Notes:
This 177-nucleotide RNA was probed chemically with 2A3. The reactions ran in a buffer of 150 mM KOAc, 10 mM MgCl2 and 150 mM bicine (pH 8.5), at 24 C.
[RMDB]
RNA sequence: GGGAACGACUCGAGUAGAGUCGAAAAGGCACGGCGUUCGUCAGAUUCGUAGCCGUCUUCCCAGCCUUGAACAGGUAACGGAAGAAGUUUCGCAAAUGCGACGGCACGGUCUUAUCCCGCGGCGCUCGCCUCCUAGCGGCUUCGGCCGCUAGGAGGCAAAAGAAACAACAACAACAAC
Reactivity to 2A3 in 0.01 (KOAc 150mM, MgCl2 10mM, bicine 150mM(pH8.5), 24C), signal-to-noise 2, nucleotides 027 to 126: g050g010c030a050c170g000g010c000g000u090u070c000g040u080c040a000g030a000u300u230c020g000u000a080g000c000c000g010u000c000u000u030c000c000c010a000g030c000c000u050u200g200a120a070c020a080g010g000u000a010a000c050g020g010a000a000g010a020a070g150u000u050u050c060g000c000a120a300a160u300g020c000g000a010c020g000g000c000a000c000g020g000u080c000u020u130a130u150c000c000c060g000c000g000g000c010g000c010u070c090

For 2A3 the reverse transcriptase was SuperScript II with manganese.